[RMDB]
RNA sequence: GGGAACGACUCGAGUAGAGUCGAAAACCCCAAAACCUUACACUGAGAGCAUUUAGCCUAAUUACUCUUUAAAUCAAAUCAGGCAAUAGAGAGAAACUCGAGAGGUGAAAACCCCACAGCAUUCUGAAACGGUUACUCGGGUUCGCCCGAGUAACAACACUUCUAACUUGUUCGCAAGUUAGAAGUGAAAAGAAACAACAACAACAAC
Reactivity to 2A3 in 0.01 (KOAc 150mM, MgCl2 10mM, bicine 150mM(pH8.5), 24C), signal-to-noise 1, nucleotides 027 to 156: c000c010c000c020a050a060a080a160c030c030u170u150a030c070a030c080u150g100a040g000a000g020c040a020u060u040u150a020g000c020c000u080a120a050u130u100a070c030u030c020u120u300u150a070a110a060u120c050a020a050a170u000c060a020g030g000c020a050a040u110a010g060a010g010a000g020a030a030a050c060u070c030g030a040g000a090g020g020u020g000a020a010a020a020c020c020c000c020a070c000a020g100c020a030u100u000c020u070g060a100a240a000c070g020g000u010u010a000c000u000c000g000g000g010u000u020c030g030c000c000c000g000a000g000u000a000a000c000a000a000